[RMDB]
RNA sequence: GGGAACGACUCGAGUAGAGUCGAAAAGAAAGAGAGUUAGACACGGUUGAUCUCACCCUUCGGGGGGGCUAUAGAGAUCACUGGAAGCACUACCGGAUAACCGGAACAUUGCAGCAAUGCAGCCCAAAAAAUCCAAACAUCUUCGGAUGUUUGGAAAGGAUAACAUGCUCUUCGGAGCAUGUUAUCCAAAAGAAACAACAACAACAAC
Reactivity to 2A3 in 0.01 (KOAc 150mM, MgCl2 10mM, bicine 150mM(pH8.5), 24C), signal-to-noise 1, nucleotides 027 to 156: g060a000a100a000g120a010g050a020g040u050u130a030g070a080c040a040c130g040g000u100u130g010a020u000c000u010c030a080c000c000c020u070u170c300g040g000g000g000g040g000g000c020u080a050u060a140g010a000g020a000u000c000a000c010u000g000g010a110a000g000c020a000c130u130a110c110c000g000g110a260u080a250a060c020c000g010g000a020a030c020a000u090u120g000c000a000g000c000a030a030u050g000c020a020g000c060c000c000a000a090a050a050a000a000u000c000c000a000a000a000c000a000u000c020u040u000c120g050g000a000u010g010u000u000u010g000g000a060a000a060